This 177-nucleotide RNA was probed chemically with DMS and 2A3.

RNA sequence: GGGAACGACUCGAGUAGAGUCGAAAACAGAAGAGGAGUAUGCAGACUAUGUUAAGACUGCACAGGCCAUGGGUCUAGUGUUUAACCCAAGUAAGACACACCGUACUCGGUCAUAUGGCAUACUUGACCAUAUGAUAUCCUUCGGGAUAUCAUAUGGAAAAGAAACAACAACAACAAC
Reactivity to DMS in 0.01 (KOAc 150mM, MgCl2 10mM, bicine 150mM(pH8.5), 24C), signal-to-noise 9, nucleotides 027 to 126: c070a090g010a130a090g010a090g010g000a060g010u010a060u000g010c020a040g010a280c080u000a100u010g010u000u010a080a050g010a090c050u000g000c030a040c120a070g000g000c020c020a090u000g010g010g020u000c030u000a090g020u000g010u000u000u000a110a090c030c030c030a070a080g010u010a070a060g010a060c040a060c100a060c060c050g010u000a060c120u000c040g010g000u000c070a090u010a060u000g000g010c030a100u010a060c020u000u000g010a300
Reactivity to 2A3 in 0.01 (KOAc 150mM, MgCl2 10mM, bicine 150mM(pH8.5), 24C), signal-to-noise 9, nucleotides 027 to 126: c040a020g140a140a010g060a080g140g030a020g030u110a040u070g010c010a010g040a100c040u050a030u200g140u150u140a080a020g040a040c020u040g020c020a020c010a030g100g000c040c030a080u120g080g000g010u030c050u070a090g020u030g070u080u070u080a040a050c010c020c010a020a010g050u050a070a010g030a010c010a000c000a010c070c030g040u090a070c050u050c070g030g000u020c030a050u070a050u200g050g000c020a030u070a100c020u010u020g020a030

DMS adducts were read by reverse transcription with MarathonRT. The 2A3 profile rests on 21,106 reads. Values cover nucleotides 27 to 126. It was measured as part of the RMDB library OK2TST.